[RMDB]
RNA sequence: GGGAACGACUCGAGUAGAGUCGAAAAUGGAUCGGAUAAGAUGAUUUGGUUGCAGGAUGUCAUAUGUGAUAGGAUCGUUUCGGACUUAAUGGGAAACAGUGCGUCGGACACAUACGUCUCGGUGGGGCAACCUGUACUCAUUCGUGAGUACAGGUUGAAAAGAAACAACAACAACAAC
Reactivity to DMS in 0.01 (KOAc 150mM, MgCl2 10mM, bicine 150mM(pH8.5), 24C), signal-to-noise 5, nucleotides 027 to 126: u010g010g000a040u000c040g000g000a060u020a070a090g000a080u010g000a050u010u000u020g010g010u010u020g000c050a070g010g010a060u000g000u010c060a070u020a070u030g020u000g000a090u020a090g020g010a060u000c070g000u010u010u010c020g010g010a090c070u010u020a070a070u040g000g000g000a060a060a100c090a080g020u000g010c080g010u010c020g000g000a090c070a080c120a080u010a080c120g000u000c000u010c030g000g010u020g000g000g000g000
Reactivity to 2A3 in 0.01 (KOAc 150mM, MgCl2 10mM, bicine 150mM(pH8.5), 24C), signal-to-noise 6, nucleotides 027 to 126: u100g040g020a040u050c040g010g030a020u060a130a070g080a080u160g050a100u070u050u150g060g000u050u070g050c010a020g010g100a050u040g070u080c040a030u050a090u230g060u040g030a050u050a080g070g020a050u020c050g030u040u060u050c040g010g010a030c020u050u100a100a140u180g050g000g040a050a090a020c050a030g010u020g090c030g030u040c050g030g010a010c010a000c010a070u150a090c070g040u000c030u040c020g030g000u050g000g000g000g000